[RMDB]
RNA sequence: GGGAACGACUCGAGUAGAGUCGAAAAGUGUUCUGCUUGGUUGCGUGUCGGUGUUGAGGUCGCCACUGUAGAGAGGCGUUCUCGCGCCGUUAAAGUGGGGGGAACGGGUCAGGCCGGUGACGGAGCAGCCCACCUUGCGCACGUUCCCGUUGCAGAAGAUUAGAUCUGUGUUCGCACAGAUCUAAUCAAAAGAAACAACAACAACAAC
Reactivity to 2A3 in 0.01 (KOAc 150mM, MgCl2 10mM, bicine 150mM(pH8.5), 24C), signal-to-noise 3, nucleotides 027 to 156: g220u150g060u020u010c000u020g030c040u060u080g020g000u000u040g000c000g010u010g030u070c020g040g030u040g020u120u300g000a010g000g030u020c000g000c010c000a050c050u120g140u300a090g040a020g050a090g220g000c000g000u030u020c000u000c010g000c000g000c000c000g000u020u000a030a010a010g020u130g010g010g000g000g020g020a080a050c100g030g020g040u060c020a000g020g040c000c000g020g010u040g010a020c000g000g000a010g000c000a010g000c000c000c000a000c010c000u000u040g000c020g000c000a010c000g000u000u040c000c000c000g050u020u050g000c020a010g010a100a030
Reactivity to DMS in 0.01 (KOAc 150mM, MgCl2 10mM, bicine 150mM(pH8.5), 24C), signal-to-noise 1, nucleotides 027 to 156: g030u010g000u000u020c030u010g000c000u000u030g010g000u000u020g000c000g060u000g050u000c000g010g050u010g000u000u000g040a050g000g030u020c010g070c060c000a090c020u000g030u010a150g030a150g000a170g030g010c000g000u010u010c010u000c050g010c040g030c010c020g010u000u000a010a100a060g030u000g030g010g020g030g060g000a060a070c090g000g000g010u010c100a140g000g010c030c000g000g000u000g000a300c040g010g010a080g010c070a300g000c020c000c000a110c020c010u010u010g020c090g030c090a120c030g000u010u010c030c000c030g030u000u010g030c030a080g030a110a160